Source: RMDB library RFMREP, as collected in RNAgym. Structure probing data (2A3 and DMS) for a 177-nucleotide construct. The 2A3 profile rests on 1,068 reads. The RNA was probed in 150 mM KOAc, 10 mM MgCl2 and 150 mM bicine (pH 8.5) at 24 C. The DMS profile rests on 1,042 reads. Reactivities are given for positions 27 through 126.
[RMDB]
RNA sequence: GGGAACGACUCGAGUAGAGUCGAAAAUCGGAUUUCCGAGCCUAUAUUGGUUUUGAAAGGACCUUUAAGUCCCUACUAUACUACAUUGUACUAGCGUAGGCCACGUAGGCCCGUAAGAUAUUAUAACCAUUCCAUAGUGCUUCGGCACUAUGGAAUGAAAAGAAACAACAACAACAAC
Reactivity to 2A3 in 0.01 (KOAc 150mM, MgCl2 10mM, bicine 150mM(pH8.5), 24C), signal-to-noise 1, nucleotides 027 to 126: u060c010g030g030a040u090u170u000c010c010g000a010g060c000c010u010a030u020a030u060u140g000g000u050u070u090u160g090a020a090a000g000g010a000c000c000u060u110u130a140a000g000u000c000c000c000u010a030c040u030a020u000a020c030u050a050c030a200u140u160g060u060a070c090u030a050g080c040g070u040a020g000g050c030c000a020c010g010u010a010g020g020c000c020c000g010u020a030a000g080a070u110a010u270u210a100u060a090a020c040
Reactivity to DMS in 0.01 (KOAc 150mM, MgCl2 10mM, bicine 150mM(pH8.5), 24C), signal-to-noise 2, nucleotides 027 to 126: u000c050g030g000a300u010u000u000c070c000g000a020g020c060c000u010a070u000a180u010u000g000g000u000u020u010u010g000a100a100a120g000g000a020c030c080u000u030u010a100a150g010u000c020c000c020u000a090c010u000a060u000a030c050u000a030c100a120u020u010g010u000a140c110u000a020g020c110g010u000a040g000g000c020c000a030c190g030u000a020g000g000c000c000c000g000u000a080a070g000a090u000a030u000u010a080u010a140a150c130